An RNA of 177 nucleotides, treated with DMS and 2A3 and read out base by base.
The 2A3 profile rests on 1,650 reads.
For DMS, 795 sequencing reads were counted.
The data come from the RNA Mapping Database (RMDB), library M2PK50.
[RMDB]
RNA sequence: GGGAACGACUCGAGUAGAGUCGAAAACUCGAACGGUUCGCCGUUCGAGAAAAGCGCGUCAGCCCUACGAUGCAAGCGCAAGCGCGUGCAUCGUAAAUGAAAAAACUUGUGUGUUCGCACACAAGAACGUACACUCCCUGUUCGCAGGGAGUGUACGAAAAGAAACAACAACAACAAC
Reactivity to DMS in 0.01 (KOAc 150mM, MgCl2 10mM, bicine 150mM(pH8.5), 24C), signal-to-noise 1, nucleotides 027 to 126: c010u000c000g000a030a000c010g000g010u000u010c250g080c010c000g000u020u000c020g000a000g010a000a020a110a130g010c140g050c080g010u020c040a130g010c030c000c000u000a000c000g010a000u000g020c000a050a020g000c010g030c140a090a200g000c060g000c010g030u000g010c000a010u000c000g000u010a000a050a090u020g000a000a050a080a110a060a110c030u010u000g000u000g030u000g000u000u030c240g000c010a010c010a010c000a000a010g010a050a080
Reactivity to 2A3 in 0.01 (KOAc 150mM, MgCl2 10mM, bicine 150mM(pH8.5), 24C), signal-to-noise 1, nucleotides 027 to 126: c010u000c000g000a030a000c010g000g050u050u050c200g090c080c000g000u000u000c000g000a000g000a000a040a010a000g060c020g000c010g170u110c080a030g050c000c000c000u030a010c000g000a000u010g000c040a020a020g010c030g000c100a170a040g180c080g000c010g040u030g010c000a000u000c010g010u000a000a030a060u150g130a070a090a030a000a000a000c010u020u000g000u000g000u000g030u000u090c260g060c070a010c000a000c000a000a000g000a030a000